[RMDB]
RNA sequence: GGGAACGACUCGAGUAGAGUCGAAAAGAUAUGGACCUGAACGUGGACAACAGCCAUACUCGGAAACGAGUAUGGACAUGUCCCGUUUCAGGUCCUAAGUCAAAAGGCAGGGCUUCGGCCCUGCCAACUGGUAUCAACUCUUCGGAGUUGAUACCAGAAAAGAAACAACAACAACAAC
Reactivity to DMS in 0.01 (KOAc 150mM, MgCl2 10mM, bicine 150mM(pH8.5), 24C), signal-to-noise 1, nucleotides 027 to 126: g000a040u010a300u000g010g000a000c000c010u000g000a020a020c000g000u000g020g020a010c020a010a080c300a260g000c000c060a000u000a000c000u000c020g010g000a110a120a250c020g020a020g000u020a000u000g000g020a040c130a120u000g030u000c000c030c010g000u000u020u020c010a000g000g000u000c000c000u000a010a060g020u010c050a070a080a210a170g010g000c050a000g020g020g060c010u000u000c260g020g060c000c000c010u000g010c000c000a000a000